[RMDB]
RNA sequence: GGGAACGACUCGAGUAGAGUCGAAAAGGAGCCUGGUGGCAUGUCAGUUGGUCUUGCCGAAGAUGGUCAACUGCAUCCCAAGAGGAUCACCCUAAAUACCAUCGUAACGGAAUACCUCACCAACCAGCUGACCGAUAGCUUUCGAGCUAUCGGUCAGAAAAGAAACAACAACAACAAC
Reactivity to DMS in 0.01 (KOAc 150mM, MgCl2 10mM, bicine 150mM(pH8.5), 24C), signal-to-noise 1, nucleotides 027 to 126: g000g020a040g030c000c000u000g000g000u000g000g050c040a110u000g060u000c000a000g040u000u000g000g010u010c000u000u000g000c030c040g030a030a170g070a000u030g000g010u010c150a000a020c000u000g000c280a040u000c140c090c000a000a000g000a170g000g030a000u000c060a040c010c030c010u000a070a300a020u110a090c020c030a120u000c080g000u040a020a050c050g000g000a110a120u000a000c100c160u060c010a020c060c030a070a180c030c250a050g020
Reactivity to 2A3 in 0.01 (KOAc 150mM, MgCl2 10mM, bicine 150mM(pH8.5), 24C), signal-to-noise 2, nucleotides 027 to 126: g070g000a030g030c000c000u040g030g040u160g030g030c040a030u080g090u300c010a000g000u000u000g000g020u020c040u040u160g090c120c060g030a020a020g030a080u140g020g000u000c030a040a000c000u060g000c020a000u040c010c010c010a020a030g100a050g090g020a030u090c050a130c070c000c000u070a060a030a040u160a040c020c020a030u030c050g010u050a100a060c030g020g010a040a060u040a050c000c000u070c010a060c000c030a000a080c020c000a010g000
Structure probing data (DMS and 2A3) for a 177-nucleotide construct. Source: RMDB library OK1LIB, as collected in RNAgym. DMS adducts were read by reverse transcription with MarathonRT. The 2A3 profile rests on 1,105 reads. For DMS, 979 sequencing reads were counted. The reactions ran in a buffer of 150 mM KOAc, 10 mM MgCl2 and 150 mM bicine (pH 8.5), at 24 C.